[RMDB]
RNA sequence: GGGAACGACUCGAGUAGAGUCGAAAAGUCUAAUUCGUUAGACAAUCGUGCGUACUACUCGACAUGAGCGGCGACGGGAGUAGCGUCCCAAAUAGGACGCUACUUUGAUCGUCCGAGCUCAACAGCGAGUAUCGCGACCGUGCUGGUUCGCCAGCAAGCAUGAUAGUACCUUCGGGUACUAUCAUGCAAAAGAAACAACAACAACAAC
Reactivity to DMS in 0.01 (KOAc 150mM, MgCl2 10mM, bicine 150mM(pH8.5), 24C), signal-to-noise 1, nucleotides 027 to 156: g000u000c000u010a010a050u000u010c300g040u000u000a040g010a010c000a000a100u020c060g020u040g020c040g000u000a240c040u010a010c010u010c000g050a070c040a300u000g000a060g000c040g000g030c070g000a080c040g020g000g000a020g010u000a010g020c030g020u010c000c000c050a060a200a180u020a080g040g000a040c000g000c000u010a000c020u010u000u000g020a100u000c030g000u010c000c040g020a130g010c010u010c030a050a090c100a130g000c030g000a090g000u000a050u000c000g020c050g010a240c010c030g000u000g010c020u000g000g020u000u020c170g040c060c020a060g000c030a060a120
Reactivity to 2A3 in 0.01 (KOAc 150mM, MgCl2 10mM, bicine 150mM(pH8.5), 24C), signal-to-noise 4, nucleotides 027 to 156: g010u000c000u010a000a060u100u110c190g080u100u000a000g010a000c020a030a120u220c160g100u230g050c040g010u070a120c030u010a000c000u010c010g110a120c090a100u090g000a000g000c020g080g010c120g000a000c050g050g060g010a000g010u000a000g020c000g000u030c020c000c010a110a270a040u300a040g000g000a000c000g000c000u000a000c000u000u000u030g020a040u030c000g090u000c040c020g030a020g030c000u010c000a010a040c040a030g060c000g000a010g040u020a020u300c000g000c010g020a030c020c020g080u050g020c000u010g000g080u050u030c160g090c070c010a000g040c020a010a010

This 207-nucleotide RNA was probed chemically with DMS and 2A3.
For 2A3 the reverse transcriptase was SuperScript II with manganese.
The reactions ran in a buffer of 150 mM KOAc, 10 mM MgCl2 and 150 mM bicine (pH 8.5), at 24 C.
DMS (dimethyl sulfate) methylates the pairing face of unpaired adenines and cytosines.